[RMDB]
The data come from the RNA Mapping Database (RMDB), library POS240. The record gives the reactivity of an RNA of 307 nucleotides to 2A3 and DMS. For DMS the reverse transcriptase was MarathonRT. Conditions: 150 mM KOAc, 10 mM MgCl2 and 150 mM bicine (pH 8.5), 24 C.

RNA sequence: GGGAACGACUCGAGUAGAGUCGAAAAGGUAAGGUCGUGAGACCUUACCAAGGACGGUUCGUGAGAACCGUCCAACCAUUACUGCUACGGCAGUAAUGGAAUGGGCGUGACAAUGGCAUCACAUGGUAGUACGAGAGGAACCCUUGUGGCACUCCCCUGGUUUCCACCGUGAGUCGAGCGACUGGUGUAGUGAAGCUACCAAGUGACGGAUACUGACUGGACGCAUCUUAAGCCUGAAUCCGAGACCAGGCCUACAGCAUGCCUGUACACGGAACUUCGGUUCCGUGAAAAGAAACAACAACAACAAC
Reactivity to 2A3 in 0.01 (KOAc 150mM, MgCl2 10mM, bicine 150mM(pH8.5), 24C), signal-to-noise 5, nucleotides 027 to 266: g000g000u000a000a000g020g000u010c020g020u060g090a110g000a010c000c000u000u000a000c000c000a000a000g000g000a000c000g000g000u000u010c020g010u090g060a110g000a020a000c000c000g010u000c000c000a000a000c000c000a000u000u000a000c000u000g010c000u020a040c110g130g000c010a000g000u000a000a010u000g000g040a010a040u100g010g000g000c020g020u010g020a100c050a100a090u120g010g030c030a030u020c000a010c000a010u040g020g000u000a010g000u030a030c080g060a050g020a070g120g070a160a220c000c010c020u100u160g080u280g070g020c030a040c080u070c000c000c000c010u040g070g010u020u050u030c020c010a040c010c030g040u070g120a060g030u070c050g060a110g090c080g040a030c020u070g030g010u070g030u060a150g080u060g170a080a010g020c000u030a030c010c000a060a040g030u030g040a020c030g040g020a020u090a150c050u090g150a040c010u030g050g040a040c040g030c060a080u050c080u130u140a060a010g030c000c020u010g040a040a030u030c030c020g030a020g040a080c050c000a040g040g020c010c000u040a030c010a030g020c010a020u030g000c000c000u000g010u020a020
Reactivity to DMS in 0.01 (KOAc 150mM, MgCl2 10mM, bicine 150mM(pH8.5), 24C), signal-to-noise 6, nucleotides 027 to 266: g010g000u000a000a010g000g010u000c000g020u040g000a230g000a010c000c000u000u000a000c000c010a050a060g000g000a020c000g000g010u000u000c000g000u020g000a130g010a010a010c000c000g010u010c000c000a050a070c010c000a010u000u000a000c000u010g010c000u000a110c210g030g010c010a010g000u000a000a000u000g000g000a080a030u010g010g010g000c030g030u000g010a120c070a170a140u010g000g000c040a130u000c010a020c010a110u000g010g010u000a020g000u000a070c040g000a080g000a120g000g010a060a100c060c000c040u010u020g020u020g000g010c130a130c150u000c020c000c010c040u000g010g010u000u010u000c060c040a050c040c030g000u010g020a080g000u000c040g010a150g030c150g010a030c060u000g010g000u000g000u010a080g010u010g000a130a190g000c020u000a020c020c020a070a060g020u000g010a040c050g010g000a060u000a050c070u010g010a060c040u000g000g010a070c190g000c060a080u000c040u010u010a120a090g010c030c020u000g010a080a040u010c020c030g000a140g000a120c240c090a060g000g000c000c020u000a080c300a130g000c030a020u000g000c010c000u000g010u010a170